The record gives the reactivity of an RNA of 207 nucleotides to 2A3. Source: RMDB library OK3TST, as collected in RNAgym. The 2A3 profile rests on 744 reads.
RNA sequence: GGGAACGACUCGAGUAGAGUCGAAAACAGGUCGAUAGUACCAAUAACCCUGGUACCAAUAAGGUACUAUCGACCAUUUAGCUCUUCUUCUACAACACGCUCGCUGAAGAAGAGCCUUUCCGGUACCAGGGAAGCGAGCGGAAGGCCGAGAGGCCGACGCAGUCAUACGAUUCGUCGUAUGACUGCGAAAAGAAACAACAACAACAAC
Reactivity to 2A3 in 0.01 (KOAc 150mM, MgCl2 10mM, bicine 150mM(pH8.5), 24C), signal-to-noise 1, nucleotides 027 to 156: c020a030g000g000u000c000g010a020u000a010g000u010a000c060c000a060a160u210a130a120c000c000c000u020g000g000u020a000c000c000a040a100u140a220a090g010g000u000a000c000u000a000u000c010g000a000c000c000a010u030u030u060a000g000c000u000c000u010u000c000u030u000c010u110a120c020a200a030c170a090c060g000c000u010c000g050c000u030g020a000a000g000a000a000g000a000g000c000c000u060u090u000c000c030g030g000u020a000c000c000a000g000g000g000a030a000g000c000g030a000g000c000g000g080a080a070g010g000c000c000g090a090g010a050g130g000c000c050g000a000